[RMDB]
RNA sequence: GGGAACGACUCGAGUAGAGUCGAAAAGGGAGAUCCGAGCAGAGGCAUAGCGAACUGCGCACGGUGAAGCCUUGAGGGAAUGCCGUAGGACCCGGGUUCGAUUCCCGGCUGCUCCACCGAAGGGCCAGAUCAGCGAUUUAUUCGUAAAUCGCUGAUCAAAAGAAACAACAACAACAAC
Reactivity to 2A3 in 0.01 (KOAc 150mM, MgCl2 10mM, bicine 150mM(pH8.5), 24C), signal-to-noise 5, nucleotides 027 to 126: g060g040g030a100g000a040u020c000c020g020a020g010c020a010g040a060g090g000c070a090u150a070g070c040g070a070a080c010u030g020c060g030c040a050c050g040g010u040g050a060a000g070c010c000u020u060g050a120g010g040g030a040a120u140g040c020c020g020u060a070g020g050a040c000c000c000g020g000g000u020u070c050g050a060u070u060c000c000c000g000g010c000u060g010c020u030c030c010a020c000c010g010a030a050g030g000g000c020c020a010
Reactivity to DMS in 0.01 (KOAc 150mM, MgCl2 10mM, bicine 150mM(pH8.5), 24C), signal-to-noise 4, nucleotides 027 to 126: g000g010g010a050g030a100u010c010c030g000a130g010c040a040g030a100g030g010c050a090u040a160g030c100g010a080a070c020u000g000c010g000c130a110c020g010g030u010g000a170a200g010c010c030u010u000g000a190g020g000g000a040a030u020g000c040c030g000u020a090g020g000a070c080c060c000g000g000g000u000u020c190g000a270u020u020c000c000c000g010g000c150u010g000c070u010c010c020a100c080c030g030a140a070g010g000g020c030c130a100
Notes
An RNA of 177 nucleotides, treated with 2A3 and DMS and read out base by base. For 2A3 the reverse transcriptase was SuperScript II with manganese. For 2A3, 5,025 sequencing reads were counted. The reactions ran in a buffer of 150 mM KOAc, 10 mM MgCl2 and 150 mM bicine (pH 8.5), at 24 C. The data come from the RNA Mapping Database (RMDB), library OK1LIB. For DMS the reverse transcriptase was MarathonRT. Values cover nucleotides 27 to 126.